RNA sequence: GGGAACGACUCGAGUAGAGUCGAAAAGAUAUGGAUAUGGGUAGGGAGCCUAGGGUCGGAAACGACCCGAAAGGCUUUGAUCUACGCCAUAUCCUAAGUCAAAGGACAAGAGUUCGCUCUUGUCCAAUCCAUAGUGUCCCUUCGGGGACACUAUGGAAAAAGAAACAACAACAACAAC
Reactivity to DMS in 0.01 (KOAc 150mM, MgCl2 10mM, bicine 150mM(pH8.5), 24C), signal-to-noise 1, nucleotides 027 to 126: g000a020u000a270u030g000g000a010u000a010u000g000g020g020u000a000g000g000g000a010g010c010c000u010a300g000g000g000u000c000g020g040a170a090a080c040g000a010c000c000c000g000a000a120a090g010g000c000u010u000u010g020a150u000c000u010a000c000g000c000c000a000u010a010u000c000c000u000a030a120g000u000c000a130a190a230g000g000a020c010a000a000g010a090g000u000u020c300g000c000u010c000u020u000g020u000c000c000a050a030